An RNA of 207 nucleotides, treated with DMS and 2A3 and read out base by base. Conditions: 150 mM KOAc, 10 mM MgCl2 and 150 mM bicine (pH 8.5), 24 C. Reactivities are given for positions 27 through 156.

RNA sequence: GGGAACGACUCGAGUAGAGUCGAAAAAGUCACUAGGUCAGAAAGCAAGAAUCAUUCUUACUCGAAAACCGAUAUUAGUGAUCUGCACCAGGGCUAUAAUAAUCCACCAUCAAGAUUCAUAUCACAAUAACAAUUCCAUAGUAUCUUGCUAUAUACAGAUUUAAAUCCCAUUCGUGGGAUUUAAAUCAAAAGAAACAACAACAACAAC
Reactivity to DMS in 0.01 (KOAc 150mM, MgCl2 10mM, bicine 150mM(pH8.5), 24C), signal-to-noise 1, nucleotides 027 to 156: a140g000u000c020a010c060u000a090g010g000u000c010a120g020a260a010a010g000c000a010a000g060a000a300u010c180a080u010u000c010u000u000a020c000u010c020g000a300a030a080a010c040c000g000a190u010a180u000u010a050g050u000g000a010u010c040u000g000c060a140c000c030a040g000g000g020c060u010a050u000a060a070u000a080a120u000c040c020a080c030c020a090u020c070a040a090g000a100u000u000c050a080u000a060u000c040a080c070a000a080u000a060a080c060a050a150u000u000c000c010a130u010a080g000u000a060u000c040u000u010g000c010u000a090u000a050u000a100c170a290
Reactivity to 2A3 in 0.01 (KOAc 150mM, MgCl2 10mM, bicine 150mM(pH8.5), 24C), signal-to-noise 4, nucleotides 027 to 156: a000g040u040c050a060c160u030a080g020g000u040c030a020g090a110a090a000g010c050a060a040g050a090a070u050c010a010u130u010c020u050u060a110c100u040c050g060a050a080a110a160c090c040g010a010u020a060u090u030a030g000u010g010a010u010c010u020g010c050a010c020c020a010g030g000g000c010u030a010u010a280a040u060a030a030u060c010c010a020c050c020a060u100c010a020a010g010a030u140u060c060a020u140a060u140c070a020c040a160a090u200a200a050c050a070a100u270u050c110c010a040u050a060g010u020a050u050c010u020u060g010c000u050a020u100a030u150a180c050a020